This 207-nucleotide RNA was probed chemically with 2A3 and DMS.
DMS adducts were read by reverse transcription with MarathonRT.
For 2A3, 2,538 sequencing reads were counted.
High DMS reactivity at an A or C suggests that its Watson-Crick edge is free.
[RMDB]
RNA sequence: GGGAACGACUCGAGUAGAGUCGAAAAUGGUCCGACAGAAGCAGCUAUACAUGUUACGCUUAAUCCUUCCAAAGCGUUAACCACGGUUUAUUUAGUUGGCGUGCCAUUACAAUCAGCAACAAUAUGCGUUGUUUCACUUCCUACUGAAGAUUCUCAAGCCUGCAUAUUUAUUCGUAAAUAUGCAGGCAAAAGAAACAACAACAACAAC
Reactivity to 2A3 in 0.01 (KOAc 150mM, MgCl2 10mM, bicine 150mM(pH8.5), 24C), signal-to-noise 5, nucleotides 027 to 156: u010g000g030u050c060c020g020a040c060a050g110a130a010g030c040a000g020c010u020a020u030a140c030a040u180g000u020u020a000c000g000c010u030u030a100a080u240c030c110u210u000c060c020a050a000a000g020c010g020u060u120a030a020c030c040a060c130g040g050u070u120u040a100u080u120u020a020g000u010u030g020g000c010g040u030g000c010c000a000u040u050a070c050a070a120u130c030a020g040c010a010a030c010a130a150u120a070u300g070c060g000u010u000g010u020u020u020c040a020c030u040u000c030c030u170a170c060u100g030a040a010g010a140u160u070c100u090c050a070a040
Reactivity to DMS in 0.01 (KOAc 150mM, MgCl2 10mM, bicine 150mM(pH8.5), 24C), signal-to-noise 1, nucleotides 027 to 156: u010g020g000u020c080c000g010a150c060a090g010a110a120g030c010a080g010c010u000a110u000a090c020a110u040g030u000u000a010c030g000c000u010u010a120a110u020c050c040u010u000c060c080a160a050a070g000c030g000u000u000a040a050c050c070a110c050g030g000u010u000u000a070u010u000u000a090g050u000u000g040g010c240g000u000g010c000c000a100u000u020a060c060a100a110u000c050a190g020c010a070a080c060a090a150u000a200u000g000c030g020u000u010g000u000u000u010c110a060c080u000u000c010c060u020a150c150u000g010a040a060g000a300u000u000c010u000c000a030a300